The record gives the reactivity of an RNA of 177 nucleotides to DMS and 2A3. 2A3 adducts were read by reverse transcription with SuperScript II with manganese. For 2A3, 5,589 sequencing reads were counted. The data come from the RNA Mapping Database (RMDB), library TTRINS. The DMS profile rests on 13,855 reads. The RNA was probed in 150 mM KOAc, 10 mM MgCl2 and 150 mM bicine (pH 8.5) at 24 C.
[RMDB]
RNA sequence: GGGAACGACUCGAGUAGAGUCGAAAAGAUAUGGAGCGAUCUACCCACCCUAAAUACAUCAAUGAUGAAGACUGCAUCGGAAACGAUGCAGUCUUUUGAGAUGUUUAGGAGGAUCGCUCCUAAGUCACUAUGUAAAUGAGUUCGCUCAUUUACAUAGAAAAGAAACAACAACAACAAC
Reactivity to DMS in 0.01 (KOAc 150mM, MgCl2 10mM, bicine 150mM(pH8.5), 24C), signal-to-noise 9, nucleotides 027 to 126: g010a050u000a060u020g000g010a020g010c000g010a010u000c010u000a130c040c050c150a300c050c000c000u000a000a030a110u010a120c030a020u000c010a070a070u010g000a060u010g000a010a000g000a010c000u010g000c000a010u000c000g000g010a020a030a080c000g010a000u000g000c000a000g000u000c000u000u000u000u000g010a300g000a010u000g010u000u000u000a000g000g000a140g000g000a010u000c000g000c010u000c000c000u000a000a050g000u000c050a230
Reactivity to 2A3 in 0.01 (KOAc 150mM, MgCl2 10mM, bicine 150mM(pH8.5), 24C), signal-to-noise 2, nucleotides 027 to 126: g040a010u110a050u180g000g000a010g010c010g000a000u000c000u070a300c040c050c030a040c030c010c030u100a090a100a060u300a070c030a020u060c020a040a300u190g120a030u100g000a200a000g000a030c000u010g010c000a000u000c010g030g000a020a040a020c010g000a000u020g010c000a000g000u000c000u000u000u000u010g000a010g000a000u000g010u010u000u010a000g000g000a000g000g000a000u000c000g010c010u010c000c000u000a000a010g000u020c000a010